Structure probing data (2A3 and DMS) for a 177-nucleotide construct. It was measured as part of the RMDB library OK1LIB. Conditions: 150 mM KOAc, 10 mM MgCl2 and 150 mM bicine (pH 8.5), 24 C. The 2A3 profile rests on 2,574 reads.

[RMDB]
RNA sequence: GGGAACGACUCGAGUAGAGUCGAAAAGCACCGCCGGAGCAGCUCUAUCUGAAACACAUAGGUCUGCACCUGUCCGAGCAGGGCUAACAACUUUUGCCGGGCCACGGUGGGCUCGGACACCGGGGCGCUUUAGCUGUCCGUUCGCGGACAGCUAAAGAAAAGAAACAACAACAACAAC
Reactivity to 2A3 in 0.01 (KOAc 150mM, MgCl2 10mM, bicine 150mM(pH8.5), 24C), signal-to-noise 4, nucleotides 027 to 126: g040c030a030c080c020g080c040c010g030g030a070g000c000a000g010c020u000c000u010a040u000c050u070g100a130a090a020c080a000c010a030u030a020g060g000u000c000u020g000c010a060c020c050u050g050u030c000c000g010a000g000c020a050g030g030g020c030u130a050a040c100a030a100c040u080u140u210u220g100c040c020g050g060g010c020c010a040c020g020g020u070g030g020g000c010u010c000g020g010a000c000a000c000c000g010g000g000g000c020g030
Reactivity to DMS in 0.01 (KOAc 150mM, MgCl2 10mM, bicine 150mM(pH8.5), 24C), signal-to-noise 3, nucleotides 027 to 126: g020c070a110c020c000g030c040c040g030g020a150g000c000a000g000c000u000c020u010a030u000c140u030g000a210a100a050c210a110c300a020u000a020g010g010u000c000u000g020c000a300c050c070u020g000u000c000c000g000a020g010c000a300g030g000g030c090u020a070a090c200a100a130c100u020u010u050u010g000c020c040g010g000g010c050c020a090c030g000g000u000g030g000g030c000u010c000g000g000a020c030a030c040c020g000g000g000g040c100g000